An RNA of 177 nucleotides, treated with 2A3 and DMS and read out base by base. The reactions ran in a buffer of 150 mM KOAc, 10 mM MgCl2 and 150 mM bicine (pH 8.5), at 24 C. DMS adducts were read by reverse transcription with MarathonRT. Reactivities are given for positions 27 through 126. It was measured as part of the RMDB library OK2TRN.
RNA sequence: GGGAACGACUCGAGUAGAGUCGAAAAUCUUCGAGGAGGGGCAUACAGACCUCACCCCUCAGAGACCUUCUGGGUCUUCCCAGGAGUUGCAAUUUAAUCUGUCACUGUGCCUCGUAGACAGUAGGUGUACAGGAAUAUGUUUCGACAUAUUCCUGUAAAAAGAAACAACAACAACAAC
Reactivity to 2A3 in 0.01 (KOAc 150mM, MgCl2 10mM, bicine 150mM(pH8.5), 24C), signal-to-noise 4, nucleotides 027 to 126: u010c010u070u100c040g000a040g040g000a020g000g030g020g010c020a030u100a190c100a080g180a160c010c020u030c030a080c010c020c000c010u010c020a030g010a000g000a060c010c010u010u000c020u000g000g030g110u080c000u230u190c030c000c000a000g010g000a010g020u090u130g010c010a010a040u060u150u230a140a060u080c010u020g020u040c010a000c060u050g020u050g090c010c000u030c020g010u000a060g000a040c010a000g030u060a050g000g130u160g030
Reactivity to DMS in 0.01 (KOAc 150mM, MgCl2 10mM, bicine 150mM(pH8.5), 24C), signal-to-noise 9, nucleotides 027 to 126: u000c020u000u000c070g010a080g010g020a130g010g000g000g010c060a070u010a160c180a110g010a100c050c030u010c070a200c060c030c000c010u000c020a080g010a100g000a100c160c000u000u000c050u000g010g000g010u010c150u010u010c010c000c020a040g000g000a030g000u000u010g010c150a090a090u010u010u010a150a130u000c010u000g000u000c030a070c030u000g010u000g000c030c010u000c060g000u000a110g000a020c040a030g010u010a060g010g010u000g010